[RMDB]
RNA sequence: GGGAACGACUCGAGUAGAGUCGAAAAGGCAUACGUGCAGUCCCUUUGGAGUUCAGGCAGGCCGACCCGGUUGAGUUUGGGGAGCUUGUCGCUGGUCGAGGACUUAACGCUGAAGAGGGGACUAGGCCAUCCCUACACAAACUGGUCGGGGUCUGGAGUUUUAUUAUUGGUUCGCCAAUAAUAAAACAAAAGAAACAACAACAACAAC
Reactivity to DMS in 0.01 (KOAc 150mM, MgCl2 10mM, bicine 150mM(pH8.5), 24C), signal-to-noise 1, nucleotides 027 to 156: g050g020c000a080u000a080c120g010u000g000c060a150g020u000c010c010c030u000u000u000g010g020a080g010u000u010c030a090g040g010c000a050g020g030c000c010g000a200c010c000c050g030g000u000u010g010a150g040u000u010u010g020g040g020g010a150g010c030u000u030g010u000c000g010c040u020g020g040u020c050g020a090g020g010a100c030u000u000a040a060c060g000c030u000g000a090a150g000a150g020g040g000g000a060c030u000a050g000g000c010c040a110u010c000c010c010u000a140c060a140c020a070a120a040c070u030g020g020u010c030g000g010g040g010u010c030u020g020g010a300
Reactivity to 2A3 in 0.01 (KOAc 150mM, MgCl2 10mM, bicine 150mM(pH8.5), 24C), signal-to-noise 5, nucleotides 027 to 156: g060g020c030a080u120a190c210g080u110g130c060a020g040u050c010c000c000u020u020u050g070g010a080g010u040u040c050a020g030g020c030a030g040g080c010c010g020a070c020c010c030g030g000u140u230g060a110g050u050u160u170g000g010g010g010a010g000c000u020u010g030u040c050g010c060u040g000g020u010c020g030a090g020g040a030c010u070u080a100a020c090g070c170u060g060a080a010g030a060g040g010g000g010a010c010u030a030g050g030c010c010a020u020c010c000c010u100a030c050a000c000a040a170a040c070u090g000g040u040c040g020g040g000g040u010c010u010g020g010a050
Notes:
Chemical mapping of a 207-nucleotide RNA with DMS and 2A3. Values are in units of 0.01, from 0 to 300, in steps of 10. For 2A3 the reverse transcriptase was SuperScript II with manganese. The data come from the RNA Mapping Database (RMDB), library VIROID. The DMS profile rests on 2,929 reads. 2A3 is a SHAPE reagent: it acylates the 2'-hydroxyl of flexible nucleotides of all four kinds. For 2A3, 3,881 sequencing reads were counted.